[RMDB]
RNA sequence: GGGAACGACUCGAGUAGAGUCGAAAAGUACGAUUUUUCGAAAUCGUACGAAGGUCAGGUGGCAGCACGACGACACUGGUCGCGGCGACCGAGCCGAACAGAAUAUGUGUAAUUUCGAUUACACAAAUGAAGUCUCUCUUUUCGAAGAGAGACUUCAAAAAGAAACAACAACAACAAC
Reactivity to 2A3 in 0.01 (KOAc 150mM, MgCl2 10mM, bicine 150mM(pH8.5), 24C), signal-to-noise 1, nucleotides 027 to 126: g010u000a010c000g000a030u030u030u000u000u080c090g030a000a000a000u010c000g020u000a010c000g000a060a000g030g010u030c010a000g070g000u050g140g050c150a160g110c030a120c250g130a070c000g060a050c090a090c230u130g200g000u000c030g030c000g050g040c000g040a030c000c000g000a010g000c010c030g000a040a000c000a010g230a110a080u170a060u170g010u010g030u020a010a010u060u060u050c160g000a000u000u000a000c010a000c000a030a000a030
Reactivity to DMS in 0.01 (KOAc 150mM, MgCl2 10mM, bicine 150mM(pH8.5), 24C), signal-to-noise 1, nucleotides 027 to 126: g030u000a010c000g000a000u000u000u000u000u000c160g000a020a000a020u000c000g000u000a000c010g020a130a080g010g000u000c030a300g000g030u000g010g020c050a140g010c000a080c090g010a030c000g000a170c130a070c300u000g000g010u000c000g020c020g000g000c010g000a100c020c030g030a220g000c000c000g000a080a100c160a080g000a080a180u000a100u000g000u000g010u000a020a000u000u020u010c190g000a010u000u000a000c000a000c010a060a080a030